[RMDB]
RNA sequence: GGGAACGACUCGAGUAGAGUCGAAAACAAGUCAUUCGUGACUUGAAAAAGCGUACUACACCAAGUUUCAAUGACGCCACGUAACAUCCAUCCCAAAUAGGAUGGUGGUGGUAAGACAGAAAUUGGUGUAUCGCAAAAAUGCUCUUUCGAGAGCAAACGAAAGAUGCUAUUUCGAUAGCAUCUUUCGAAAAGAAACAACAACAACAAC
Reactivity to 2A3 in 0.01 (KOAc 150mM, MgCl2 10mM, bicine 150mM(pH8.5), 24C), signal-to-noise 4, nucleotides 027 to 156: c010a010a000g000u000c010a020u100u160c300g160u080g020a010c000u010u000g100a110a040a010a000a000g030c030g010u080a130c070u020a010c000a000c000c020a040a180g170u020u040u010c150a190a120u110g050a050c110g020c010c000a000c010g030u050a050a010c030a250u040c020c000a000u000c000c010c040a140a300a160u220a130g000g000a000u000g010g000u010g010g000u010g000g000u040a030a050g060a020c020a020g040a020a020a030u020u000g020g000u020g000u040a000u030c000g000c000a000a000a010a000a130u060g000c010u000c000u040u110u230c250g060a020g010a010g000c000a020a040a010
Reactivity to DMS in 0.01 (KOAc 150mM, MgCl2 10mM, bicine 150mM(pH8.5), 24C), signal-to-noise 2, nucleotides 027 to 156: c030a010a000g010u010c010a030u000u000c300g030u020g020a050c000u000u010g000a020a080a110a140a180g000c010g020u010a090c130u000a010c000a000c010c000a020a050g000u000u010u010c010a150a170u020g010a190c150g000c000c000a020c000g020u000a050a030c030a210u010c000c000a000u010c020c000c000a060a200a160u020a050g010g010a030u000g020g010u020g010g040u010g000g050u000a010a130g010a270c070a120g000a010a030a040u000u000g010g030u000g000u000a010u000c010g010c040a020a040a060a060a120u010g020c000u010c010u010u000u010c190g020a050g000a050g000c000a010a030a160
The record gives the reactivity of an RNA of 207 nucleotides to 2A3 and DMS. For DMS the reverse transcriptase was MarathonRT. The data come from the RNA Mapping Database (RMDB), library RNAMAK. Reactivities are given for positions 27 through 156. Conditions: 150 mM KOAc, 10 mM MgCl2 and 150 mM bicine (pH 8.5), 24 C.